This 177-nucleotide RNA was probed chemically with DMS and 2A3. Source: RMDB library OK1LIB, as collected in RNAgym.

RNA sequence: GGGAACGACUCGAGUAGAGUCGAAAACUGGACGAGCGGCAGCAGGAGCUGGAGGGACAGCUGGCCCGCAUUCCCAUCCGCUUCGACACGCAGUCGAUCCAGCAGCGGCGGCGCGCCAUCGAGGAGGGCACCAGGCUUCGUUCGCGAGGCCUGGUGCAAAAGAAACAACAACAACAAC
Reactivity to DMS in 0.01 (KOAc 150mM, MgCl2 10mM, bicine 150mM(pH8.5), 24C), signal-to-noise 2, nucleotides 027 to 126: c010u000g010g020a070c000g000a130g050c000g020g000c070a040g020c190a150g010g020a050g030c000u040g030g030a080g030g000g030a060c140a070g000c070u000g000g000c010c000c000g000c120a120u000u000c000c010c000a110u020c060c000g040c020u020u010c000g000a110c100a150c060g000c040a080g050u000c000g020a060u000c010c010a020g000c090a040g010c070g000g000c050g000g000c100g000c040g000c040c010a100u010c030g000a070g010g030a080g000g000
Reactivity to 2A3 in 0.01 (KOAc 150mM, MgCl2 10mM, bicine 150mM(pH8.5), 24C), signal-to-noise 4, nucleotides 027 to 126: c050u060g050g020a010c020g010a030g070c050g050g000c040a040g020c040a060g050g050a050g030c080u120g020g040a030g020g050g040a020c040a020g060c040u070g030g030c020c000c010g010c020a080u050u040c000c000c000a110u020c000c010g010c000u030u020c010g040a040c020a030c070g050c020a010g040u040c010g040a150u010c040c000a010g010c040a010g010c040g050g000c000g010g030c020g000c000g020c010c020a090u090c040g020a030g020g040a050g010g040